RNA sequence: GGGAACGACUCGAGUAGAGUCGAAAAUAGAAGACUUGUGAAAUAGAUGCUUGAUGUAUAUGUGUGAUCACUGUGAACUUGACAGCUACAAAAUGAGAUUGAUAUAGGAAUGUUGCAUUGGCAACUCAGAUGUCUCCAGCAGGGUUGUCAGUGGUGAGUUCUGCAAGGUAUUCGUACCUUGCAGAACAAAAGAAACAACAACAACAAC
Reactivity to 2A3 in 0.01 (KOAc 150mM, MgCl2 10mM, bicine 150mM(pH8.5), 24C), signal-to-noise 2, nucleotides 027 to 156: u280a010g070a040a000g010a050c050u090u110g010u020g070a080a130a050u120a030g080a050u070g030c020u030u060g070a070u140g050u030a020u020a000u140g040u000g000u010g080a040u050c060a010c040u040g010u020g090a080a020c020u010u040g030a020c000a040g000c010u100a030c050a060a020a060a100u070g020a010g010a080u120u080g050a000u040a030u030a150g080g030a170a000u020g000u040u020g000c020a030u030u000g030g010c010a030a020c000u010c050a060g080a130u100g000u110c020u040c050c020a030g030c030a030g000g000g040u000u000g030u000c010a000g000u020g040g040u060g010a030
Annotation
Chemical mapping of a 207-nucleotide RNA with 2A3. For 2A3, 702 sequencing reads were counted. The reactions ran in a buffer of 150 mM KOAc, 10 mM MgCl2 and 150 mM bicine (pH 8.5), at 24 C. The data come from the RNA Mapping Database (RMDB), library OK3TST.